[RMDB]
RNA sequence: GGGAACGACUCGAGUAGAGUCGAAAAUUUUUCUGUUACUUUCUGGCCGUUUCACCACCCCCCUUCCUCCCUCCAAGUGGCAUUGUAAAACUCACAGUGACAAAGAGACAGAGUAGGGUUCUAGGCCGAAGUGAUAACCAUUCGUGGUUAUCACUUCAAAAGAAACAACAACAACAAC
Reactivity to 2A3 in 0.01 (KOAc 150mM, MgCl2 10mM, bicine 150mM(pH8.5), 24C), signal-to-noise 4, nucleotides 027 to 126: u070u070u000u010u020c030u040g090u040u070a100c020u030u070u040c030u040g030g000c020c020g040u030u070u130c070a060c050c010a080c010c000c000c000c000c000u030u030c010c000u000c010c000c000u000c010c010a110a030g040u010g050g000c000a000u010u030g070u070a090a100a050a060c050u090c020a030c010a030g030u030g050a030c020a010a090a020g060a010g010a030c020a060g040a020g050u030a020g020g010g010u040u020c060u060a060g060g000c010c020
Reactivity to DMS in 0.01 (KOAc 150mM, MgCl2 10mM, bicine 150mM(pH8.5), 24C), signal-to-noise 4, nucleotides 027 to 126: u010u040u000u010u000c040u000g010u000u020a090c050u010u000u000c050u010g000g010c020c040g010u020u000u030c050a070c050c040a180c050c000c010c020c010c020u010u020c090c000u000c030c030c020u000c030c040a050a090g020u020g010g020c030a050u020u020g000u020a070a060a040a180c160u000c090a050c050a040g030u000g000a030c050a040a030a100g010a080g010a090c100a050g010a060g020u010a090g000g000g010u000u010c050u010a100g010g020c080c100

This 177-nucleotide RNA was probed chemically with 2A3 and DMS. 2A3 adducts were read by reverse transcription with SuperScript II with manganese. For DMS the reverse transcriptase was MarathonRT. Values cover nucleotides 27 to 126. It was measured as part of the RMDB libraries RFM100 and RFMREP. High DMS reactivity at an A or C suggests that its Watson-Crick edge is free.